[RMDB]
RNA sequence: GGGAACGACUCGAGUAGAGUCGAAAAGAUAUGGAGCACUACCUCGCUACAACGAAUUCGGAAACGAACUAUUGUAGAACUACGAGAUGUGCUCCUAAGUCAAAAGGAUAGUCUUCGGACUAUCCAACACUUGGGAUCUGUUCGCAGAUCCCAAGUGAAAAGAAACAACAACAACAAC
Reactivity to 2A3 in 0.01 (KOAc 150mM, MgCl2 10mM, bicine 150mM(pH8.5), 24C), signal-to-noise 2, nucleotides 027 to 126: g040a000u060a020u110g000g010a000g000c000a010c030u040a060c010c000u000c010g050c050u020a010c000a050a010c060g300a150a300u100u010c000g000g050a040a030a030c010g030a010a020c060u090a110u100u000g010u010a020g010a170a130c260u220a050c230g000a000g030a000u010g000u000g000c000u000c010c000u000a000a000g000u000c020a010a010a030a120g020g000a010u010a000g010u000c030u060u150c300g040g000a000c000u000a010u000c000c000a000a000
Reactivity to DMS in 0.01 (KOAc 150mM, MgCl2 10mM, bicine 150mM(pH8.5), 24C), signal-to-noise 2, nucleotides 027 to 126: g030a030u000a300u000g010g020a020g030c000a000c000u000a100c090c000u000c020g000c010u000a020c010a000a000c210g030a070a300u000u000c000g020g020a070a090a150c010g000a000a020c130u000a210u000u000g010u010a010g010a070a050c100u000a290c000g000a010g010a020u000g000u000g010c020u000c020c010u000a000a080g010u010c060a050a040a140a090g000g000a010u000a000g000u000c000u010u010c170g010g000a020c000u010a000u000c000c000a020a120